[RMDB]
RNA sequence: GGGAACGACUCGAGUAGAGUCGAAAACAUGCCAGUCACUAAGAAACCCGGAAGCACUGUAAUUGCGGGGUCUAUAAAUGCACAUGGCUCUGUGCUCAUUAAAGCUACCCACGUGGGCAAUGACACCCCAAUGCUAAACUUUCGAGUUUAGCAUUGGAAAAGAAACAACAACAACAAC
Reactivity to 2A3 in 0.01 (KOAc 150mM, MgCl2 10mM, bicine 150mM(pH8.5), 24C), signal-to-noise 3, nucleotides 027 to 126: c030a010u080g020c000c000a000g040u030c020a010c040u070a110a030g070a150a180a210c020c020c000g040g050a030a010g040c050a040c200u110g050u260a120a110u050u110g060c020g010g010g020g010u000c020u020a090u020a060a100a060u090g020c050a010c030a130u060g040g000c010u000c070u040g090u040g000c020u020c040a020u040u230a170a170a030g000c030u030a090c000c020c010a040c040g020u110g020g000g000c000a050a110u070g040a020c010a070c020c060
Reactivity to DMS in 0.01 (KOAc 150mM, MgCl2 10mM, bicine 150mM(pH8.5), 24C), signal-to-noise 4, nucleotides 027 to 126: c080a090u020g000c010c000a070g000u000c020a030c050u000a130a070g010a040a110a080c030c010c010g000g000a090a090g020c050a060c130u010g010u000a070a080u010u000g010c050g010g010g000g010u000c010u000a100u010a070a060a060u010g010c110a030c040a080u000g000g000c020u000c100u000g010u000g000c030u000c070a040u010u010a070a060a100g010c070u000a080c060c000c030a100c170g030u000g000g000g020c030a050a060u010g000a100c160a080c100c090
Structure probing data (2A3 and DMS) for a 177-nucleotide construct. The RNA was probed in 150 mM KOAc, 10 mM MgCl2 and 150 mM bicine (pH 8.5) at 24 C. For DMS the reverse transcriptase was MarathonRT. The DMS profile rests on 3,543 reads. Reactivities are given for positions 27 through 126.